[RMDB]
Structure probing data (2A3 and DMS) for a 207-nucleotide construct. Conditions: 150 mM KOAc, 10 mM MgCl2 and 150 mM bicine (pH 8.5), 24 C. DMS adducts were read by reverse transcription with MarathonRT. Values cover nucleotides 27 to 156. For 2A3, 1,621 sequencing reads were counted. For DMS, 2,570 sequencing reads were counted.

RNA sequence: GGGAACGACUCGAGUAGAGUCGAAAACCGUAGGAUAGACCAAAACAACACUAGCUCCCUGCGAGCUUGGAUUUAUUCGAAAGAGUUGUCAGCUCGCCUGGAGCUAACGUCUAUCCUAAACGGAAAAGUGCUGGUAUUCUUCGGAAUACCAGCACAACUUGACUUAAGUCUUCGGACUUAAGUCAAGAAAAGAAACAACAACAACAAC
Reactivity to 2A3 in 0.01 (KOAc 150mM, MgCl2 10mM, bicine 150mM(pH8.5), 24C), signal-to-noise 2, nucleotides 027 to 156: c000c000g010u020a000g010g010a000u000a000g010a020c050c120a050a110a170a110c170a130a020c060a050c110u040a000g030c000u000c000c010c000u000g000c020g000a010g000c020u040u180g030g000a040u240u300u220a040u090u060c010g000a110a090a000g000a010g010u020u040g000u040c000a010g000c000u010c010g010c010c020u020g000g010a010g020c010u010a000a000c000g000u000c010u000a000u000c000c000u000a000a030a000c000g060g000a050a090a050a090g010u010g000c000u010g000g010u010a010u010u020c030u070u100c240g060g000a010a000u000a000c000c000a000g020c000a000c000a000a000
Reactivity to DMS in 0.01 (KOAc 150mM, MgCl2 10mM, bicine 150mM(pH8.5), 24C), signal-to-noise 1, nucleotides 027 to 156: c000c000g030u010a010g020g020a020u010a010g000a030c040c050a130a150a300a190c090a110a070c120a150c100u000a020g010c000u010c000c000c050u000g000c010g030a040g020c010u040u000g030g010a040u000u010u010a000u020u000c010g000a290a160a160g000a090g020u020u010g000u000c020a070g000c030u000c010g030c020c070u000g020g020a030g020c000u000a020a020c030g000u000c000u000a010u000c000c010u010a070a040a090c020g000g000a090a030a060a110g010u000g010c000u000g000g030u000a000u000u000c000u000u020c300g010g000a020a020u010a000c000c010a000g000c010a000c000a000a070